[RMDB]
RNA sequence: GGGAACGACUCGAGUAGAGUCGAAAAGGGGUCAAAGUCACCGUGGAGAGGGUGAGCGAAUCUUACUGAAGCCUCCACGGUAAGAAAUGUGCUCACCUCCCCACCUCCACGCAAGUCUUUGACGGAGGCACCCAAAACACAGAUUUCGAUCUGUGAAGCUACUAGAGUUAUUCGUAACUCUAGUAGCAAAAGAAACAACAACAACAAC
Reactivity to DMS in 0.01 (KOAc 150mM, MgCl2 10mM, bicine 150mM(pH8.5), 24C), signal-to-noise 1, nucleotides 027 to 156: g030g030g000g030u000c000a000a000a100g020u000c010a120c110c050g200u000g030g000a040g000a300g040g030g030u000g030a030g050c120g000a220a230u000c000u000u050a000c030u000g030a080a070g000c040c020u000c020c000a280c000g010g000u020a030a020g020a050a020a030u030g070u000g030c000u030c000a020c030c010u000c300c060c000c060a300c120c030u010c030c020a040c030g000c080a060a050g020u000c030u000u010u010g000a000c000g000g040a060g140g050c040a120c020c010c010a080a030a150a150c040a040c000a000g020a020u000u000u000c300g000a030u010c000u010g010u020g020a120a130
Reactivity to 2A3 in 0.01 (KOAc 150mM, MgCl2 10mM, bicine 150mM(pH8.5), 24C), signal-to-noise 5, nucleotides 027 to 156: g050g000g040g000u040c010a030a000a000g020u040c030a030c220c040g000u000g000g000a010g000a010g000g000g000u010g000a000g010c000g030a050a060u020c000u000u000a000c000u030g080a210a050g000c000c000u000c010c000a010c010g000g000u000a000a000g000a000a120a030u260g060u150g030c000u000c000a010c000c000u040c050c010c000c000a030c000c000u000c000c000a010c000g010c020a160a280g030u040c010u010u020u010g030a040c040g000g010a010g000g000c000a050c000c010c000a030a060a080a000c010a000c010a010g050a020u090u170u220c200g100a030u070c020u010g000u000g030a020a030
Description
Source: RMDB library RNAMAK, as collected in RNAgym. Chemical mapping of a 207-nucleotide RNA with DMS and 2A3. Values cover nucleotides 27 to 156. The RNA was probed in 150 mM KOAc, 10 mM MgCl2 and 150 mM bicine (pH 8.5) at 24 C. The 2A3 profile rests on 8,210 reads. For DMS the reverse transcriptase was MarathonRT.